[RMDB]
RNA sequence: GGGAACGACUCGAGUAGAGUCGAAAAAAUCAAGAGAGGUAUGUUAAAAUUACUGGGUUGUACCCAACCAUUACGGUACCUGAAGAGUUCGCAAGUCAUGUUGCCAACUUCCAAAAAUCAGGUUAUAUAGCGUCCGACUUCGGUCGGACGAAAAGAAACAACAACAACAAC
Reactivity to DMS in 0.01 (KOAc 150mM, MgCl2 10mM, bicine 150mM(pH8.5), 24C), signal-to-noise 3, nucleotides 027 to 129: a040a060u030c070a000a000g040a090g010a070g040g000u000a030u020g010u030u090a040a160a060a010u090u000a030c040u000g010g020g000u000u000g030u020a140c040c030c000a080a110c050c090a080u000u010a060c210g000g100u020a040c030c060u020g010a010a150g000a040g020u000u000c300g000c040a000a190g000u020c250a060u080g000u000u060g030c010c060a040a000c000u010u000c000c150a020a080a050a100a090u010c000a010g010g040u000u100a100u010a050u000a050g000
Reactivity to 2A3 in 0.01 (KOAc 150mM, MgCl2 10mM, bicine 150mM(pH8.5), 24C), signal-to-noise 1, nucleotides 027 to 129: a000a000u130c100a000a000g080a000g000a000g070g000u140a130u050g200u120u280a000a160a000a000u050u010a060c100u000g000g000g000u090u000g090u100a050c000c000c000a020a020c000c000a000u100u210a050c000g030g000u030a070c000c000u000g000a080a000g060a000g000u000u040c040g020c000a000a020g030u160c040a110u120g080u000u000g000c000c000a000a180c060u080u060c220c110a000a110a000a000a000u150c080a060g000g020u180u000a080u000a000u100a010g000
Source information
An RNA of 170 nucleotides, treated with DMS and 2A3 and read out base by base. 2A3 adducts were read by reverse transcription with SuperScript II with manganese. Conditions: 150 mM KOAc, 10 mM MgCl2 and 150 mM bicine (pH 8.5), 24 C. For DMS the reverse transcriptase was MarathonRT. For DMS, 4,924 sequencing reads were counted. The data come from the RNA Mapping Database (RMDB), library 15KLIB. Reactivities are given for positions 27 through 129.